[RMDB]
This 177-nucleotide RNA was probed chemically with 2A3 and DMS.

RNA sequence: GGGAACGACUCGAGUAGAGUCGAAAAGAAGGAUAGUUCGCUAUCCUUCAAACCCACCGAAAGGCAAAUGUGUUAGAUGCCCUCAAACACAUAAACCGGGCAAAACAGUACCGUUCGCGGUACUGAAGUAAUACACGAUGUUCGCAUCGUGUAUUACAAAAGAAACAACAACAACAAC
Reactivity to 2A3 in 0.01 (KOAc 150mM, MgCl2 10mM, bicine 150mM(pH8.5), 24C), signal-to-noise 5, nucleotides 027 to 126: g010a000a000g010g010a000u010a010g020u020u030c070g020c110u000a000u000c000c000u000u000c000a000a000a000c010c000c010a010c010c020g140a130a060a030g050g000c040a080a090a110u050g020u000g020u030u040a070g000a140u220g050c020c000c010u030c020a110a130a020c010a000c010a030u100a020a040a010c030c020g010g040g000c000a030a030a040a060c010a000g000u000a000c010c000g010u030u070c250g000c000g070g000u010a000c000u010g000a020a010
Reactivity to DMS in 0.01 (KOAc 150mM, MgCl2 10mM, bicine 150mM(pH8.5), 24C), signal-to-noise 5, nucleotides 027 to 126: g010a020a010g000g010a000u000a010g010u010u010c200g040c010u010a000u000c000c000u000u010c000a030a100a130c000c000c020a150c170c100g000a080a080a100g010g010c070a030a250a040u000g000u000g010u000u000a080g000a070u020g000c140c090c060u000c060a060a040a030c010a020c000a020u000a040a160a130c040c040g000g010g040c190a050a060a090a190c010a010g010u000a010c000c000g020u000u030c180g010c010g010g020u000a000c000u000g000a020a070
The reactions ran in a buffer of 150 mM KOAc, 10 mM MgCl2 and 150 mM bicine (pH 8.5), at 24 C.